[RMDB]
RNA sequence: GGGAACGACUCGAGUAGAGUCGAAAAUCCGGCUCCGAAGAUCUCGAAGGGAACAUCCUCGGCUUCGCUAGAUGAGGAAAACUUCGCCAGGACUCUGGCGGCCAGAGCCGGGGAUCCCCGGUUCCGGGAGGAUCUGGAGAGGCUGCUUUCCCUGGAGGUACCAUAUAGUGUUCGCACUAUAUGGUACAAAAGAAACAACAACAACAAC
Reactivity to DMS in 0.01 (KOAc 150mM, MgCl2 10mM, bicine 150mM(pH8.5), 24C), signal-to-noise 1, nucleotides 027 to 156: u000c010c010g020g000c010u040c000c010g000a090a100g000a120u000c030u010c000g020a180a110g000g010g000a060a080c070a260u000c020c000u010c010g010g000c000u010u000c120g020c050u000a090g030a150u010g040a120g020g000a190a120a090a090c060u000u010c070g000c010c000a020g030g020a200c270u000c000u000g000g000c010g000g000c140c150a120g010a050g030c000c000g020g000g040g010a120u000c030c020c010c000g000g030u000u000c080c030g050g020g030a140g020g020a070u000c010u020g030g010a120g000a100g030g020c030u010g000c020u000u000u010c000c000c000u020g020g000a300g070
Reactivity to 2A3 in 0.01 (KOAc 150mM, MgCl2 10mM, bicine 150mM(pH8.5), 24C), signal-to-noise 2, nucleotides 027 to 156: u060c030c010g110g140c020u030c030c020g130a160a010g020a110u020c070u070c050g070a100a050g030g030g000a010a040c010a040u020c000c000u010c020g020g000c000u160u170c080g000c070u140a060g010a210u150g010a160g060g000a030a090a070a120c030u140u090c080g010c000c010a080g120g070a300c120u040c000u250g010g000c010g010g000c020c030a070g030a010g030c000c000g000g010g000g000a000u050c020c000c000c000g060g000u050u070c070c000g050g070g010a090g040g030a050u000c010u040g020g000a070g000a000g090g000c040u070g030c000u050u040u000c010c000c000u010g150g030a120g120
Chemical mapping of a 207-nucleotide RNA with DMS and 2A3. It was measured as part of the RMDB library VIROID. As a SHAPE reagent, 2A3 marks flexible, mostly unpaired nucleotides at the ribose 2'-OH. The reactions ran in a buffer of 150 mM KOAc, 10 mM MgCl2 and 150 mM bicine (pH 8.5), at 24 C. High DMS reactivity at an A or C suggests that its Watson-Crick edge is free.